[RMDB]
RNA sequence: GGGAACGACUCGAGUAGAGUCGAAAAAACCAAUUCGUUGGUUUCCGAACCGUAGGAGGCUUCCCAUAUAAGACAGUACAUGGUCUUCGAAAGAGGACCAUUGUACAAUGACGUAUGGGAGAGCCUCCUAAACGGGAUUACAGCGUUUCGACGCUAACAAUCCAUUGAUUUUCGAAUCAAUGGAUUGAAAAGAAACAACAACAACAAC
Reactivity to 2A3 in 0.01 (KOAc 150mM, MgCl2 10mM, bicine 150mM(pH8.5), 24C), signal-to-noise 3, nucleotides 027 to 156: a000a000c050c010a050a030u160u090c160g090u040u010g000g010u000u000u000c040c010g010a100a060c000c000g000u020a030g000g000a000g000g010c010u020u010c010c000c000a000u000a000u000a000a060g080a060c060a030g010u000a000c020a010u000g010g000u010c000u000u000c010g100a170a090a060g000a010g000g000a020c040c000a000u000u050g000u000a000c000a010a010u070g010a010c080g000u020a000u020g000g020g020a140g020a000g030c020c010u000c000c000u000a000a000a000c000g000g000g010a000u010u190a070c090a060g000c010g010u070u100u170c220g100a050c030g000c000u000a040a050
Reactivity to DMS in 0.01 (KOAc 150mM, MgCl2 10mM, bicine 150mM(pH8.5), 24C), signal-to-noise 3, nucleotides 027 to 156: a090a100c000c000a050a070u000u000c140g010u000u000g010g010u000u000u010c000c000g010a070a200c010c000g010u010a050g010g000a040g030g010c000u000u000c000c010c000a050u000a030u000a070a210g010a210c080a120g000u000a010c000a020u010g000g020u010c000u000u000c010g000a190a180a270g030a030g010g000a000c000c010a000u000u010g030u000a000c000a110a110u000g000a180c170g020u000a010u000g000g000g000a050g030a030g030c020c000u000c010c000u000a000a020a030c020g020g000g020a150u000u000a080c080a070g030c000g040u000u000u000c230g020a110c000g000c000u000a080a220
This 207-nucleotide RNA was probed chemically with 2A3 and DMS.
The 2A3 profile rests on 2,416 reads.
It was measured as part of the RMDB library RNAMAK.
The RNA was probed in 150 mM KOAc, 10 mM MgCl2 and 150 mM bicine (pH 8.5) at 24 C.
Values cover nucleotides 27 to 156.
High 2A3 reactivity points to a flexible backbone, as in loops and unpaired stretches.